[RMDB]
RNA sequence: GGGAACGACUCGAGUAGAGUCGAAAAGCCAGCAAUGUUUUCAAUCUGGAAGAGAUUAUGCAAGAGUUCAACGCUUACAAGCAACGGGUCGUUCACGUGGAAGGAAAGGUGUUCGACACCGUCCCUACAUAUCUCAGGGGCCUGGACGACUUGAUGACUUAAAAGUUGGUUUCGACCAACUUUUAAGAAAAGAAACAACAACAACAAC
Reactivity to 2A3 in 0.01 (KOAc 150mM, MgCl2 10mM, bicine 150mM(pH8.5), 24C), signal-to-noise 4, nucleotides 027 to 156: g050c020c010a000g040c060a060a130u060g040u060u070u060u150c070a070a090u110c030u090g020g020a110a010g050a020g010a070u050u080a030u190g020c050a070a020g030a020g080u050u130c050a070a050c080g000c010u100u170a100c070a090a050g020c010a060a020c020g020g000g010u000c000g000u000u020c000a000c040g050u080g050g050a070a090g030g050a140a060a070g020g000u020g010u090u180c120g050a030c000a020c040c010g030u040c000c000c000u040a030c030a080u250a070u090c070u020c080a030g040g030g010g000c000c000u000g000g020a020c020g010a000c010u000u020g030a050u060g010a030
Reactivity to DMS in 0.01 (KOAc 150mM, MgCl2 10mM, bicine 150mM(pH8.5), 24C), signal-to-noise 3, nucleotides 027 to 156: g050c050c020a060g050c080a120a110u010g000u000u000u010u000c050a080a110u000c030u000g020g010a120a140g010a300g010a060u010u000a040u000g010c030a010a140g010a110g010u010u010c070a060a040c090g010c020u000u000a110c050a080a130g020c060a110a150c040g000g010g020u000c000g020u000u000c000a020c070g020u010g000g010a110a040g020g030a030a040a030g070g060u010g000u000u010c150g010a110c020a030c020c010g010u000c000c010c000u010a080c060a080u000a070u000c060u010c100a140g020g050g020g000c050c060u000g000g030a060c010g050a060c010u000u000g010a090u010g000a180